[RMDB]
RNA sequence: GGGAACGACUCGAGUAGAGUCGAAAAAGCUUCACCUAGUGCCAACGUGCUGAUCGAGGAAUCGGUCUAUGGUUGGAAGGAAUUCGAACUCGAGCUAAUGCGCGAUGGACACGACAGCGUCGUGGUACAGCCCCAUGAUGUUCGCAUCAUGGGGCUGAAAAGAAACAACAACAACAAC
Reactivity to DMS in 0.01 (KOAc 150mM, MgCl2 10mM, bicine 150mM(pH8.5), 24C), signal-to-noise 3, nucleotides 027 to 126: a050g010c110u000u000c070a090c020c030u000a220g030u000g000c000c030a060a050c000g040u000g000c050u000g020a080u000c020g020a040g000g010a170a070u000c000g000g000u000c010u000a110u000g020g010u010u030g010g020a100a150g000g020a070a090u000u000c020g010a050a080c020u000c040g000a030g000c130u000a080a070u000g000c000g020c010g000a130u000g020g020a130c000a030c020g000a100c300a090g000c070g010u010c050g050u010g040g000u010a150
Reactivity to 2A3 in 0.01 (KOAc 150mM, MgCl2 10mM, bicine 150mM(pH8.5), 24C), signal-to-noise 2, nucleotides 027 to 126: a000g050c060u050u060c040a120c050c010u080a060g040u040g110c010c000a050a010c030g010u040g000c020u050g030a070u000c000g010a000g000g080a240a110u010c020g000g000u010c020u020a140u150g280g020u110u150g100g030a050a000g040g010a080a110u170u100c030g000a010a020c020u010c030g000a010g050c110u240a150a010u100g000c020g000c000g020a000u010g010g040a100c010a000c030g000a010c020a000g070c040g070u040c010g030u020g000g000u090a100